[RMDB]
RNA sequence: GGGAACGACUCGAGUAGAGUCGAAAACGAACCGUGGGGGAGAAGAGGUCCACCCGUCGUGAGAACUCCCGGGAGAGGGCGAGGAACCGCUCGAAGGUGGGCUCUGCGGCGAGUGCCGCAUGGAGGGCAUGAGCGAGAGAUUCGUCUCUCGCUCAUGAAAAGAAACAACAACAACAAC
Reactivity to DMS in 0.01 (KOAc 150mM, MgCl2 10mM, bicine 150mM(pH8.5), 24C), signal-to-noise 2, nucleotides 027 to 126: c050g000a070a110c100c050g000u020g000g000g010g010g020a080g030a100a110g010a100g020g000u000c060c020a070c020c010c040g030u000c050g000u010g000a130g000a110a170c080u010c020c030c020g020g010g000a200g010a160g000g000g020c030g010a100g000g000a110a110c060c020g010c020u000c040g000a140a100g010g040u000g010g000g000c050u000c050u010g020c000g020g000c000g010a110g020u000g030c000c010g000c040a010u000g010g000a060g000g000g000
Reactivity to 2A3 in 0.01 (KOAc 150mM, MgCl2 10mM, bicine 150mM(pH8.5), 24C), signal-to-noise 1, nucleotides 027 to 126: c020g020a040a040c120c030g080u230g000g000g000g030g010a110g010a150a060g050a080g060g120u000c020c010a030c000c020c030g090u060c010g050u050g070a070g040a060a080c030u000c000c020c000g000g080g010a110g050a040g010g030g010c050g040a060g030g010a110a060c010c030g060c070u030c020g010a080a030g000g050u100g000g010g040c000u000c010u070g000c040g000g020c050g040a170g150u250g010c010c010g080c020a010u050g010g000a040g070g040g000
This 177-nucleotide RNA was probed chemically with DMS and 2A3. For DMS the reverse transcriptase was MarathonRT. The data come from the RNA Mapping Database (RMDB), library OK2TRN. Values cover nucleotides 27 to 126. The reactions ran in a buffer of 150 mM KOAc, 10 mM MgCl2 and 150 mM bicine (pH 8.5), at 24 C.